[RMDB]
RNA sequence: GGGAACGACUCGAGUAGAGUCGAAAAACAGAUAACCUGUAUUUAGUGCUUUUAGAAAUAAUUAUUUUCAGGAUUGAUGCUUGAAUCAACAGAUCAUCUGCUCUUUCAGGUGGCUCUGGUUAUCCACAGUGACAAAUGCACAAUGAUCACUGUGUGCCACUUCGGUACACUUCGGUGUACCGAAGUGAAAAGAAACAACAACAACAAC
Reactivity to 2A3 in 0.01 (KOAc 150mM, MgCl2 10mM, bicine 150mM(pH8.5), 24C), signal-to-noise 1, nucleotides 027 to 156: a010c030a010g100a020u070a040a080c020c010u060g030u030a130u020u070u150a060g000u020g000c000u110u190u010u220a150g080a160a130a020u300a100a070u170u180a090u060u090u050u050c010a020g060g080a130u000u110g060a000u160g000c120u100u080g050a000a030u090c070a010a030c000a020g020a000u000c000a000u000c000u060g070c100u040c010u080u300u140c000a000g000g000u000g040g030c080u020c020u020g000g000u010u020a030u030c010c000a010c000a020g000u000g000a000c020a060a000a060u190g050c020a020c020a120a140u020g020a050u020c000a000c010u050g010u000g020u000g010c010